[RMDB]
RNA sequence: GGGAACGACUCGAGUAGAGUCGAAAACUUUGCAUUGCGAAAUGUUCACCAUUCGAUCUUGGGCAUUCCUAUUGAACCGGCUCAAUUCCAAAUGCUUAAUCCGCUAUGGGUCAUGAUUAUGAGUCCACUACCCUGCCUCAUUCGUGAGGCAGGGUAGAAAAGAAACAACAACAACAAC
Reactivity to DMS in 0.01 (KOAc 150mM, MgCl2 10mM, bicine 150mM(pH8.5), 24C), signal-to-noise 1, nucleotides 027 to 126: c090u020u000u010g010c060a020u000u010g010c070g000a020a080a060u000g000u020u000c070a120c060c210a130u000u020c020g000a040u000c020u000u000g010g000g010c060a170u020u000c060c100u000a240u020u000g000a060a080c150c100g020g020c010u010c010a040a180u000u000c040c060a020a020a130u020g000c040u000u000a100a040u000c190c130g060c020u000a290u000g020g000g020u000c080a020u020g020a110u010u020a080u000g020a040g010u000c020c120a100
Reactivity to 2A3 in 0.01 (KOAc 150mM, MgCl2 10mM, bicine 150mM(pH8.5), 24C), signal-to-noise 1, nucleotides 027 to 126: c030u090u090u210g000c030a090u010u140g000c010g020a050a060a040u120g000u090u100c040a080c040c020a050u020u070c030g080a150u070c050u100u040g000g010g000c020a010u020u000c000c000u030a140u020u200g080a060a040c040c010g000g030c010u040c000a030a100u100u000c030c000a030a030a120u120g000c000u020u030a070a030u060c000c020g000c080u060a090u110g010g010g000u040c050a050u130g130a090u060u180a090u180g010a010g060u030c000c040a020

The record gives the reactivity of an RNA of 177 nucleotides to DMS and 2A3. The DMS profile rests on 595 reads.